Record summary: The data come from the RNA Mapping Database (RMDB), library OK3TST. This 207-nucleotide RNA was probed chemically with 2A3.
RNA sequence: GGGAACGACUCGAGUAGAGUCGAAAACAGAACGUGUCUAACGGCUCCGGCCUGACGCUGGCGACGGUCCUCUGUUAUGGCUCGCGCCGCGUGUCGAUCGAUGGAGUUCGCGGGGAGCCGAUCGUCCAGUCCGGGACCCUGGCCUCCGACGUCCGCGCCCGUAAGGAUGAUUCGUCAUCCUUACGGGAAAAGAAACAACAACAACAAC
Reactivity to 2A3 in 0.01 (KOAc 150mM, MgCl2 10mM, bicine 150mM(pH8.5), 24C), signal-to-noise 2, nucleotides 027 to 156: c040a010g090a090a030c080g050u050g080u110c060u110a060a030c030g000g000c030u020c000c040g080g010c030c050u040g040a010c010g010c050u050g000g030c040g030a200c010g040g010u050c000c030u070c070u130g140u290u160a230u270g000g000c050u030c030g040c010g070c050c000g050c030g000u050g050u140c050g080a130u080c030g020a070u170g070g040a080g020u160u130c010g020c030g070g000g000g000a050g040c050c010g000a050u030c000g060u000c010c040a030g050u000c050c020g000g070g080a180c010c030c030u080g020g000c020c000u030c020c000g030a060c000g010u040c020c000g010c000g000